[RMDB]
RNA sequence: GGGAACGACUCGAGUAGAGUCGAAAAUCACUGGGACAGGUCAGUUGGGAUGGUUCUCUGCCAGCUAGAAGGACAGUUUUGUAGAGACGGUAGCUUUUCCUAUGGGAAACUUUUAUGUUAUUUCCAAAGAAUCUCUGGAGUCAGCCCAGCCUUGGGACAGUGAAAAUCGAUUCGUCGAUUUUCACUGAAAAGAAACAACAACAACAAC
Reactivity to DMS in 0.01 (KOAc 150mM, MgCl2 10mM, bicine 150mM(pH8.5), 24C), signal-to-noise 1, nucleotides 027 to 156: u000c000a090c060u040g010g020g010a160c030a020g010g000u000c040a110g000u020u000g050g000g030a070u010g040g040u000u000c040u000c050u000g010c030c080a070g040c080u000a070g000a100a140g000g050a060c030a110g030u000u000u000u010g030u000a080g020a090g030a050c060g000g040u000a040g000c070u010u000u000u010c000c020u000a150u020g010g020g010a080a020a090c050u000u000u000u000a120u030g000u000u000a130u000u000u000c030c030a040a080a110g020a050a120u000c020u010c040u010g020g020a100g000u000c040a070g040c030c000c010a180g010c020c060u020u000g010g010g010a100
Reactivity to 2A3 in 0.01 (KOAc 150mM, MgCl2 10mM, bicine 150mM(pH8.5), 24C), signal-to-noise 1, nucleotides 027 to 156: u150c010a000c040u040g010g040g020a030c000a060g070g010u090c020a020g000u040u050g010g000g000a040u050g030g000u080u010c020u010c000u000g030c010c000a010g020c040u020a050g070a170a040g130g030a030c040a000g010u060u110u110u140g100u090a020g000a010g010a060c000g050g000u020a020g020c000u110u050u090u000c010c030u070a160u120g040g000g030a070a070a030c040u230u200u030u050a060u200g030u040u130a150u040u090u070c030c000a120a090a000g030a120a080u040c020u000c070u170g010g010a050g020u070c070a010g000c020c010c000a060g030c030c000u030u050g000g000g040a010
This 207-nucleotide RNA was probed chemically with DMS and 2A3. Conditions: 150 mM KOAc, 10 mM MgCl2 and 150 mM bicine (pH 8.5), 24 C. The DMS profile rests on 2,114 reads. For 2A3 the reverse transcriptase was SuperScript II with manganese. For 2A3, 639 sequencing reads were counted.